An RNA of 177 nucleotides, treated with DMS and 2A3 and read out base by base. Reactivities are rounded to 0.1 and cut off at 0 and 3. 2A3 adducts were read by reverse transcription with SuperScript II with manganese. Conditions: 150 mM KOAc, 10 mM MgCl2 and 150 mM bicine (pH 8.5), 24 C. High 2A3 reactivity points to a flexible backbone, as in loops and unpaired stretches. High DMS reactivity at an A or C suggests that its Watson-Crick edge is free. Source: RMDB library M2PK50, as collected in RNAgym.
RNA sequence: GGGAACGACUCGAGUAGAGUCGAAAACGCGAACUGUUCGCAGUUCGCGAAAUAACAAACAACAGCUAACCUACUGCGAUAAGCCCUAGCUAAGUAGGUUAAAAAGAGGAAAGUUCGCUUUCCUCAACUGAACAGAUUAGUUCGCUAAUCUGUUCAGAAAAGAAACAACAACAACAAC
Reactivity to DMS in 0.01 (KOAc 150mM, MgCl2 10mM, bicine 150mM(pH8.5), 24C), signal-to-noise 3, nucleotides 027 to 126: c020g000c000g020a000a010c000u000g020u000u020c170g020c000a000g010u000u000c010g050c000g000a020a040a040u010a090a120c170a100a150a030c110a050a060c160a080g000c150u000a010a010c010c010u000a010c010u010g010c030g000a120u000a110a150g010c000c000c010u000a230g000c010u010a040a040g020u000a000g000g010u000u000a000a080a030a070a050g010a020g000g000a010a000a000g000u000u000c230g010c020u000u000u000c000c000u000c000a020a060
Reactivity to 2A3 in 0.01 (KOAc 150mM, MgCl2 10mM, bicine 150mM(pH8.5), 24C), signal-to-noise 3, nucleotides 027 to 126: c010g000c000g000a000a010c010u020g030u070u070c220g040c120a000g010u000u000c000g000c000g010a000a000a000u040a020a010c070a060a120a010c040a030a030c020a060g100c060u040a010a000c000c010u010a010c010u040g020c010g000a010u050a180a030g020c030c010c020u010a010g000c000u010a040a020g000u000a000g010g010u000u010a010a040a000a000a010g010a000g000g000a030a000a000g010u070u110c160g040c120u000u000u000c000c010u000c000a000a000